[RMDB]
RNA sequence: GGGAACGACUCGAGUAGAGUCGAAAAGAAUGCGACAAUUCGAUCGUAGUCGCAGUGAUCGGGUGAAGGUACGGAUUAGUGCCAUGGUGACGGCACGGUAACCAUGAUAAUGCGUACCGAAAAGAAACCCUUAUGAAAACUUCGGUUUUCAUAAGGGAAAAGAAACAACAACAACAAC
Reactivity to 2A3 in 0.01 (KOAc 150mM, MgCl2 10mM, bicine 150mM(pH8.5), 24C), signal-to-noise 8, nucleotides 027 to 126: g070a050a060u060g010c000g020a010c040a110a120u160u090c100g140a120u110c120g100u130a050g040u010c010g000c050a010g030u030g040a080u110c070g040g050g010u130g110a140a050g010g000u010a000c010g010g060a000u010u030a050g080u070g270c050c000a000u000g000g030u020g010a040c030g050g150c150a030c170g000g010u030a010a000c010c000a000u010g010a030u030a020a020u040g110c000g000u000a000c000c000g000a010a010a000a020g070a010a050a020
Reactivity to DMS in 0.01 (KOAc 150mM, MgCl2 10mM, bicine 150mM(pH8.5), 24C), signal-to-noise 7, nucleotides 027 to 126: g000a080a110u010g010c010g010a020c020a090a140u030u020c130g000a120u020c100g020u010a210g000u000c010g000c020a050g000u010g000a060u020c050g000g000g000u010g010a140a120g000g010u000a000c000g010g000a020u000u000a010g030u040g040c160c010a010u000g000g010u000g000a120c050g010g010c140a040c110g020g000u020a160a030c010c000a010u010g000a070u000a020a010u000g010c000g010u000a000c000c010g010a040a020a070a090g000a120a100a110